RNA sequence: GGGAACGACUCGAGUAGAGUCGAAAAAGAAAAGCGGAGGAGGGUUAUGGAUUGCGCUAAGUCCGCCCGCGCGUGGUGUGGGCUGGAAUUCGUGAAUGGAGGAUAAUUAAUGCGGCGCGCCCAAAAAGAUUUAAACCAGAUUCGUCUGGUUUAAAUCAAAAGAAACAACAACAACAAC
Reactivity to DMS in 0.01 (KOAc 150mM, MgCl2 10mM, bicine 150mM(pH8.5), 24C), signal-to-noise 3, nucleotides 027 to 126: a110g010a120a060a120a110g010c100g000g010a100g000g000a060g020g010g010u000u010a080u010g010g000a070u000u000g020c040g000c110u000a050a110g000u010c010c010g000c010c000c030g020c050g020c120g030u000g020g020u010g030u010g010g000g020c010u010g040g000a040a060u000u010c060g010u010g010a100a080u000g000g000a110g000g000a070u010a050a100u010u010a060a100u010g010c100g000g020c040g030c050g020c010c010c050a030a060a080a070a080